Overview:
This 177-nucleotide RNA was probed chemically with DMS and 2A3. Source: RMDB library OK2TRN, as collected in RNAgym.

RNA sequence: GGGAACGACUCGAGUAGAGUCGAAAACGAACGUGACGGGGCGCGUCAUGCCGCGCCGCGCCGCGCGAACAGCAGGCGCUUCGCGCGCUGCAGCGUCGAGUACGGCGUGACGAAAUGCAGCAGGUUAGACGUACCAUGGAUUCGUCCAUGGUACGUCAAAAGAAACAACAACAACAAC
Reactivity to DMS in 0.01 (KOAc 150mM, MgCl2 10mM, bicine 150mM(pH8.5), 24C), signal-to-noise 2, nucleotides 027 to 126: c050g060a060a090c060g030u010g020a060c070g000g000g000g000c040g010c000g020u000c050a010u000g010c060c010g010c010g010c010c020g020c010g000c080c020g000c010g000c020g010a070a070c130a150g020c040a140g020g000c110g000c110u000u000c050g010c020g000c000g010c130u000g000c030a070g030c020g010u000c020g020a160g020u000a200c030g010g000c010g030u000g010a030c010g000a020a050a080u010g000c020a110g020c030a060g000g010u000u010a150
Reactivity to 2A3 in 0.01 (KOAc 150mM, MgCl2 10mM, bicine 150mM(pH8.5), 24C), signal-to-noise 1, nucleotides 027 to 126: c020g000a020a010c100g070u060g080a030c070g020g050g090g000c030g000c000g020u000c020a000u030g000c000c020g020c010g000c000c000g000c000g030c010c020g000c000g000c010g010a030a050c030a050g020c000a040g260g100c060g000c100u020u010c030g000c000g000c000g000c050u130g000c030a130g000c000g030u030c030g020a030g010u110a040c010g000g020c010g000u000g010a000c020g010a040a040a030u200g030c030a010g000c030a010g010g070u050u120a080